Chemical mapping of a 207-nucleotide RNA with DMS and 2A3. For DMS, 2,651 sequencing reads were counted.

[RMDB]
RNA sequence: GGGAACGACUCGAGUAGAGUCGAAAAGGGUGAGACCUAGGAACCGUAGGGGUAUUCUCAAAGGAAGCUUUUGCAGUGACGCCCAUGUAAGUGGGAUAUAACAACAGAACUCGUAUGAGUUGCCUAAUAAAUCGGACCUUCUUCGGAAGGUCCGAAACAUAUUAGCGGUGUUCGCACCGCUAAUAUGAAAAGAAACAACAACAACAAC
Reactivity to DMS in 0.01 (KOAc 150mM, MgCl2 10mM, bicine 150mM(pH8.5), 24C), signal-to-noise 2, nucleotides 027 to 156: g000g040g000u000g000a120g030a100c010c030u000a120g040g000a030a070c060c040g000u010a060g010g000g010g040u010a070u000u010c060u000c000a040a050a120g020g000a090a050g020c080u000u000u000u010g010c040a110g000u010g030a150c050g000c020c000c010a000u020g000u000a110a230g000u010g010g020g020a070u000a040u020a060a210c040a040a050c080a090g030a050a030c030u000c020g030u000a110u000g000a200g030u010u000g010c010c020u000a050a100u000a050a080a180u000c000g020g010a050c000c000u000u010c000u010u020c300g060g000a020a020g010g030u010c000c000g000a020a050a070
Reactivity to 2A3 in 0.01 (KOAc 150mM, MgCl2 10mM, bicine 150mM(pH8.5), 24C), signal-to-noise 2, nucleotides 027 to 156: g050g010g000u060g050a140g060a050c020c020u050a050g060g030a040a030c030c020g050u060a060g060g020g010g020u060a120u180u090c080u070c090a060a050a000g020g020a070a000g030c020u050u040u050u100g050c050a060g010u020g010a020c060g010c010c010c000a010u050g070u100a130a120g010u010g000g010g000a010u030a010u020a100a020c070a020a000c010a000g070a050a020c010u020c040g080u140a080u150g040a030g020u020u040g040c000c010u110a150a090u150a090a140a100u030c020g010g000a000c000c010u010u010c000u020u030c120g090g000a000a000g000g000u020c000c010g010a000a010a000